An RNA of 177 nucleotides, treated with DMS and 2A3 and read out base by base. For 2A3 the reverse transcriptase was SuperScript II with manganese. The RNA was probed in 150 mM KOAc, 10 mM MgCl2 and 150 mM bicine (pH 8.5) at 24 C.
[RMDB]
RNA sequence: GGGAACGACUCGAGUAGAGUCGAAAAGACAUGCACGAAAACAAAAGUUUAAAGCGUGUCGUGUGUGUAUGAUAACAAGCGACAUGCUUUAGGUUUAUUUUGCAGCGCCGGAUGUUUCCAUUUGGCUCACUGAUACACUGUUCGCAGUGUAUCAGUGAAAAGAAACAACAACAACAAC
Reactivity to DMS in 0.01 (KOAc 150mM, MgCl2 10mM, bicine 150mM(pH8.5), 24C), signal-to-noise 1, nucleotides 027 to 126: g000a040c050a020u000g040c030a060c160g000a050a040a060a050c110a080a050a050a040g000u000u010u000a000a000a000g020c000g030u000g020u000c000g030u000g020u000g030u000g040u000a130u010g060a140u000a040a030c030a020a140g000c010g000a030c010a010u000g030c000u010u010u000a010g000g000u000u000u020a090u000u000u000u000g000c080a090g000c140g000c030c060g020g040a060u000g000u000u000u000c010c030a250u030u000u000g010g010c150u000
Reactivity to 2A3 in 0.01 (KOAc 150mM, MgCl2 10mM, bicine 150mM(pH8.5), 24C), signal-to-noise 2, nucleotides 027 to 126: g020a010c030a020u060g040c030a010c090g100a020a040a140a020c080a040a130a000a040g000u020u050u060a000a020a000g000c010g000u000g000u010c020g000u020g030u010g010u000g010u050a200u230g260a100u120a170a000c030a100a030g020c010g000a000c000a000u010g000c020u010u010u010a000g020g000u020u050u070a110u040u110u060u060g030c070a060g020c020g000c080c010g000g050a000u030g080u020u080u040c050c020a030u080u050u030g000g000c010u000